[RMDB]
RNA sequence: GGGAACGACUCGAGUAGAGUCGAAAAGAUAUGGAACAGCGGCCAAAGUCCUAAGAGCGAUAAGCUCGUAUCGGAAACGAUAUAGAGCUUUUGACGCUUAUGGACUUUGGCCGCUGUUCCUAAGUCACUAUACGUGAUACUUCGGUAUCACGUAUAGAAAAGAAACAACAACAACAAC
Reactivity to DMS in 0.01 (KOAc 150mM, MgCl2 10mM, bicine 150mM(pH8.5), 24C), signal-to-noise 2, nucleotides 027 to 126: g010a060u000a300u000g020g000a000a000c000a010g030c010g010g000c020c000a010a010a000g020u000c010c000u010a080a140g000a010g040c000g020a170u000a010a020g000c000u010c000g000u000a000u010c020g000g000a130a100a220c010g000a010u000a000u000a060g000a000g020c000u000u000u000u000g010a220c040g010c010u000u000a300u010g000g020a030c000u000u020u000g010g030c000c030g000c000u000g010u000u000c010c000u010a010a050g000u000c020a300
Chemical mapping of a 177-nucleotide RNA with DMS. The data come from the RNA Mapping Database (RMDB), library TTRINS. DMS adducts were read by reverse transcription with MarathonRT. The reactions ran in a buffer of 150 mM KOAc, 10 mM MgCl2 and 150 mM bicine (pH 8.5), at 24 C. For DMS, 2,110 sequencing reads were counted.